[RMDB]
RNA sequence: GGGAACGACUCGAGUAGAGUCGAAAACACAAUUCUCUAAGCGAUGAGAAGCGUGUGGAAAAUUAGGGAAGGGCUACGGCUAUAAUCCUAAGAAAGCUUAUCUACAAGCGGAGGUAUUCUCAGAACGGCAUGGAUACUACUUCGGUAGUAUCCAUGCAAAAGAAACAACAACAACAAC
Reactivity to DMS in 0.01 (KOAc 150mM, MgCl2 10mM, bicine 150mM(pH8.5), 24C), signal-to-noise 1, nucleotides 027 to 126: c000a000c030a030a300u000u000c000u000c000u000a090a040g020c210g010a150u050g030a160g000a000a000g000c300g010u000g080u000g000g020a060a000a120a040u000u000a000g000g000g000a190a290g000g000g000c040u000a030c080g030g000c010u000a040u000a070a080u050c000c000u000a090a000g000a080a080a200g000c010u000u000a080u000c010u000a070c090a020a030g000c030g010g000a070g000g010u000a120u000u000c010u010c000a080g010a160a150c210g000
An RNA of 177 nucleotides, treated with DMS and read out base by base.
The RNA was probed in 150 mM KOAc, 10 mM MgCl2 and 150 mM bicine (pH 8.5) at 24 C.
For DMS, 510 sequencing reads were counted.
The data come from the RNA Mapping Database (RMDB), library RFMREP.